[RMDB]
RNA sequence: GGGAACGACUCGAGUAGAGUCGAAAAUAAGUCUAGUUCGCUAGACUUACUAUCGGGAAAACAGCCUCCCGGCUCGAUCAGGCGGAUUCCGUCCAAGCGCUGCAACACACGUAUUCGUACGUGUGAAAGACUAUUCAAAGUUCGCUUUGAAUAGUCUAAAAGAAACAACAACAACAAC
Reactivity to DMS in 0.01 (KOAc 150mM, MgCl2 10mM, bicine 150mM(pH8.5), 24C), signal-to-noise 8, nucleotides 027 to 126: u000a000a000g000u000c000u000a010g000u000u010c230g020c010u000a000g000a030c000u000u010a010c050u000a110u010c020g010g000g000a030a040a090a160c030a040g000c020c020u000c010c010c010g010g010c020u000c020g010a090u010c210a130g000g000c010g000g000a250u000u010c030c010g010u000c030c130a040a040g010c110g000c010u000g000c150a110a240c010a000c000a010c000g020u000a020u000u010c180g020u000a000c000g010u000g010u000g000a040a070
Reactivity to 2A3 in 0.01 (KOAc 150mM, MgCl2 10mM, bicine 150mM(pH8.5), 24C), signal-to-noise 5, nucleotides 027 to 126: u020a000a000g000u000c000u000a010g020u020u050c170g020c110u000a000g000a000c000u000u000a010c010u040a030u130c010g000g000g010a020a100a030a050c010a020g010c000c010u000c000c000c000g030g000c020u020c010g080a110u120c070a080g030g000c040g080g070a300u300u130c040c010g020u020c040c030a040a000g030c050g000c160u030g050c040a150a040c000a000c000a000c010g010u010a010u040u080c200g040u050a010c010g000u000g000u000g010a010a000
An RNA of 177 nucleotides, treated with DMS and 2A3 and read out base by base. The DMS profile rests on 13,449 reads. For 2A3 the reverse transcriptase was SuperScript II with manganese. The RNA was probed in 150 mM KOAc, 10 mM MgCl2 and 150 mM bicine (pH 8.5) at 24 C. The data come from the RNA Mapping Database (RMDB), library M2PK50.